Structure probing data (2A3 and DMS) for a 207-nucleotide construct.
[RMDB]
RNA sequence: GGGAACGACUCGAGUAGAGUCGAAAAAUAGUCAGUUGACCUUCCAAGUCCGAUAUGGUAGUUAUGAAAAGUUUUUGAUGUUAUUUUUAUUCUUGCGGCAAACCUGUUGUGAAGCGGAAUAUUUCGUUAAUAUCACAGGAAAUGUCAAAGGCAACGGGAUAAGGUUGUUAUUCGUAACAACCUUAUCAAAAGAAACAACAACAACAAC
Reactivity to 2A3 in 0.01 (KOAc 150mM, MgCl2 10mM, bicine 150mM(pH8.5), 24C), signal-to-noise 2, nucleotides 027 to 156: a000u140a030g070u030c090a020g000u030u070g100a140c010c020u060u070c030c030a110a050g090u070c040c010g080a150u040a080u300g050g050u040a030g030u140u140a070u140g090a120a120a100a080g010u050u080u040u120u040g040a060u020g030u100u020a120u040u090u010u060u040a090u180u030c010u030u110g050c000g030g010c010a000a040a060c000c000u050g010u190u070g010u100g030a060a000g020c000g060g040a070a020u170a190u170u060u010c000g010u000u020a080a050u060a020u210c020a000c020a020g070g000a030a090a040u070g000u020c030a080a090a040g000g080c000a070a050c090g050g010
Reactivity to DMS in 0.01 (KOAc 150mM, MgCl2 10mM, bicine 150mM(pH8.5), 24C), signal-to-noise 1, nucleotides 027 to 156: a170u000a030g030u000c070a130g030u000u000g010a090c020c040u000u000c000c010a100a130g030u000c030c010g000a130u000a030u000g010g030u000a070g020u000u010a040u020g000a080a150a120a130g000u000u010u000u010u000g030a130u010g010u000u000a060u030u000u010u000u000a060u050u000c000u010u000g040c040g000g070c020a080a100a210c010c010u000g000u020u010g010u000g020a050a090g000c000g050g030a030a180u000a120u000u000u000c040g020u000u000a030a210u010a210u000c040a030c000a110g040g000a020a140a090u000g000u000c040a060a030a070g030g040c050a050a040c050g050g040
Values are in units of 0.01, from 0 to 300, in steps of 10. The reactions ran in a buffer of 150 mM KOAc, 10 mM MgCl2 and 150 mM bicine (pH 8.5), at 24 C.